The record gives the reactivity of an RNA of 177 nucleotides to DMS and 2A3. Reactivities are rounded to 0.1 and cut off at 0 and 3. Source: RMDB library OK2TST, as collected in RNAgym. For DMS, 2,198 sequencing reads were counted.
RNA sequence: GGGAACGACUCGAGUAGAGUCGAAAAAGGAAAUAUGUUUUUCAACAGCGGCAAGUAAUGUUUUUGAUCUACUUGUGCCCAUGUGACAUGAUGAGUAUAGAAAACUUGCACAAAGGAUAAAGAAUGGGUCAUCACUAAAGUUCGCUUUAGUGAUGACAAAAGAAACAACAACAACAAC
Reactivity to DMS in 0.01 (KOAc 150mM, MgCl2 10mM, bicine 150mM(pH8.5), 24C), signal-to-noise 3, nucleotides 027 to 126: a080g010g010a060a060a050u000a060u000g010u000u000u000u010u000c060a110a130c100a080g020c180g010g010c000a020a050g010u000a070a100u010g000u000u010u010u000u000g000a160u000c060u000a020c030u000u000g010u000g010c000c020c040a160u020g010u010g010a050c040a030u000g010a060u000g010a100g000u000a060u020a130g000a030a050a040a030c030u010u000g010c040a050c060a050a060a090g010g000a100u000a040a080a060g000a090a040u010g000g000
Reactivity to 2A3 in 0.01 (KOAc 150mM, MgCl2 10mM, bicine 150mM(pH8.5), 24C), signal-to-noise 2, nucleotides 027 to 126: a000g140g000a050a060a000u130a030u090g110u000u060u040u020u100c030a080a030c010a050g020c050g070g020c010a020a020g010u050a060a070u140g120u030u090u060u160u100g110a020u010c010u040a030c010u000u040g000u010g010c020c020c020a080u080g010u030g020a030c010a070u050g000a090u080g000a010g070u050a060u050a150g080a010a100a000a000c000u020u000g000c040a010c030a090a060a060g020g020a040u120a070a160a040g180a090a010u110g050g090